Background
An RNA of 177 nucleotides, treated with DMS and 2A3 and read out base by base. Reactivities are given for positions 27 through 126. The RNA was probed in 150 mM KOAc, 10 mM MgCl2 and 150 mM bicine (pH 8.5) at 24 C. The 2A3 profile rests on 1,793 reads.

RNA sequence: GGGAACGACUCGAGUAGAGUCGAAAAACGAAGGCCUCGACCACCGACCACAACGCCGGAGCAAGCACCCCGGAACCUAGCGUCCCCGGCGCUCCGGGAGCCGUGAACUGCGCCGGUUCCGACGGCGCAGGCGUGCUGCUUUCGAGCAGCACGCCUGAAAAGAAACAACAACAACAAC
Reactivity to DMS in 0.01 (KOAc 150mM, MgCl2 10mM, bicine 150mM(pH8.5), 24C), signal-to-noise 2, nucleotides 027 to 126: a110c090g020a130a070g010g030c000c000u000c030g000a220c070c000a050c010c040g000a110c060c020a020c090a050a070c140g000c000c020g080g020a030g000c020a080a130g010c070a100c110c030c020c070g020g000a110a080c050c070u040a060g010c020g000u000c070c050c000c080g030g000c050g000c050u000c040c030g000g020g000a060g000c010c000g010u000g000a060a170c030u000g000c000g000c050c020g000g030u000u030c000c050g000a060c000g000g010c060g060
Reactivity to 2A3 in 0.01 (KOAc 150mM, MgCl2 10mM, bicine 150mM(pH8.5), 24C), signal-to-noise 2, nucleotides 027 to 126: a000c090g040a080a030g060g000c020c000u040c050g070a080c000c010a020c010c010g060a060c000c020a040c060a130a020c040g030c010c010g020g000a000g050c050a110a000g040c000a060c000c000c000c020g050g000a040a030c040c080u050a060g080c010g080u040c050c030c020c000g010g000c020g000c010u000c020c030g010g000g000a040g020c030c020g060u070g040a060a030c050u060g010c010g010c000c000g000g000u090u060c020c010g030a020c010g020g000c000g000